[RMDB]
RNA sequence: GGGAACGACUCGAGUAGAGUCGAAAAGACGCCUGUGUGGCGAAACGAGCAAUGGAAUAAGCCGCAAUAGAAGAUGAGAUGGAAGCGGCAAGAUAGAAUGCUCGCAAGUAGAUCCAUCUCACAGAGAAGUACCAUCAUCGUUCGCGAUGAUGGUACUAAAAGAAACAACAACAACAAC
Reactivity to DMS in 0.01 (KOAc 150mM, MgCl2 10mM, bicine 150mM(pH8.5), 24C), signal-to-noise 2, nucleotides 027 to 126: g000a300c030g010c010c000u000g040u050g000u000g000g000c000g000a020a200a070c070g000a000g000c000a060a100u000g020g010a200a080u000a060a300g000c000c000g080c000a140a070u130a150g000a130a110g000a110u000g000a070g000a000u000g000g000a000a160g000c000g000g000c040a030a000g020a130u000a000g000a050a100u000g000c030u010c030g000c230a050a190g000u090a010g000a080u020c000c000a000u000c000u020c000a080c010a250g060a100g000a150
Reactivity to 2A3 in 0.01 (KOAc 150mM, MgCl2 10mM, bicine 150mM(pH8.5), 24C), signal-to-noise 2, nucleotides 027 to 126: g040a020c000g030c000c000u130g080u090g070u100g140g000c000g000a050a000a000c020g000a000g000c050a090a170u250g060g010a150a100u250a090a000g020c000c000g000c000a000a060u110a100g190a250a030g020a150u120g000a050g000a000u010g010g010a060a000g000c000g000g000c020a000a000g040a000u160a010g130a120a080u080g000c010u020c090g000c060a160a000g070u150a000g020a070u000c000c010a000u000c000u000c000a000c000a000g140a020g030a130